[RMDB]
Chemical mapping of a 207-nucleotide RNA with 2A3 and DMS. For 2A3, 5,866 sequencing reads were counted. Source: RMDB library ARCHII, as collected in RNAgym. For DMS the reverse transcriptase was MarathonRT. The reactions ran in a buffer of 150 mM KOAc, 10 mM MgCl2 and 150 mM bicine (pH 8.5), at 24 C. The DMS profile rests on 7,934 reads.

RNA sequence: GGGAACGACUCGAGUAGAGUCGAAAAUGGACAAUCCGCAGCCGGGUCCUAAGCUCUUCGCCGGGUAUGGAUCAUCGGUUCACAGACUAGAUGUCGGUGGGUCAUUAUCGAAAAUGGCUUAAGGUAUAGUCGGACCACAUGGGAGACCAUGAUGUGGGAAAAGAGAAAUGUUCGCAUUUCUCUUUUCAAAAGAAACAACAACAACAAC
Reactivity to 2A3 in 0.01 (KOAc 150mM, MgCl2 10mM, bicine 150mM(pH8.5), 24C), signal-to-noise 6, nucleotides 027 to 156: u120g040g010a010c020a040a060u020c010c030g020c050a010g020c010c000g040g010g000u000c010c010u040a160a070g030c010u000c020u120u140c090g050c070c040g000g000g010u050a050u120g030g030a010u010c020a060u100c020g010g010u070u040c030a040c020a060g030a010c010u080a060g040a220u140g060u040c010g020g030u050g030g000g000u010c010a010u010u070a060u170c110g070a210a110a010a030u020g000g000c000u060u060a090a040g040g000u060a060u050a090g040u040c020g010g030a030c000c010a010c010a020u010g010g000g010a050g030a030c010c010a010u060g040a100u070g060u080g020g070
Reactivity to DMS in 0.01 (KOAc 150mM, MgCl2 10mM, bicine 150mM(pH8.5), 24C), signal-to-noise 3, nucleotides 027 to 156: u010g000g020a090c030a100a120u000c000c030g010c060a120g010c030c010g010g000g020u010c000c010u010a060a190g020c020u000c030u000u010c260g010c150c160g010g000g020u000a250u000g000g000a020u000c010a030u000c030g020g030u000u000c060a040c050a060g010a070c010u000a060g000a120u000g030u000c020g020g070u000g000g030g030u000c010a040u010u000a130u020c130g020a060a070a050a070u000g010g000c010u000u010a070a050g010g010u000a090u000a080g010u000c030g030g010a120c000c010a040c020a020u000g000g010g020a300g010a240c010c010a030u010g010a030u000g030u000g000g010